[RMDB]
RNA sequence: GGGAACGACUCGAGUAGAGUCGAAAAGAUAUGGAAGUGAUCACCUACCCACCUCGUAUAUUCGGAAACGAAUAUACGAGAGGGUGAGUCACUUCCUAAGUCAAACGUAGUUCUUCGGAACUACGAACUUACACAAAAGGUUCGCCUUUUGUGUAAGAAAAGAAACAACAACAACAAC
Reactivity to 2A3 in 0.01 (KOAc 150mM, MgCl2 10mM, bicine 150mM(pH8.5), 24C), signal-to-noise 5, nucleotides 027 to 126: g030a030u120a080u250g000g000a000a000g010u000g010a010u030c010a020c010c010u150a210c070c050c030a080c040c010u000c010g010u010a000u000a010u010u010c010g020g020a030a060a040c010g010a000a010u000a000u000a010c000g000a000g000a000g000g000g000u010g010a030g080u030c000a000c000u010u000c000c000u030a100a020g090u040c090a170a030a080c020g010u010a000g000u010u000c010u060u070c300g150g000a010a000c000u000a000c000g000a000a010
Reactivity to DMS in 0.01 (KOAc 150mM, MgCl2 10mM, bicine 150mM(pH8.5), 24C), signal-to-noise 8, nucleotides 027 to 126: g010a050u010a300u010g000g010a010a010g040u000g010a080u000c010a030c010c000u000a140c080c040c140a300c110c000u000c000g010u000a010u000a000u000u000c010g010g000a110a060a210c000g010a010a000u000a000u000a000c000g000a000g010a040g010g000g000u000g000a050g020u000c010a010c000u000u010c000c000u000a010a120g000u010c040a100a140a300c020g010u000a000g010u000u000c000u000u000c240g010g000a020a010c000u000a000c000g000a040a110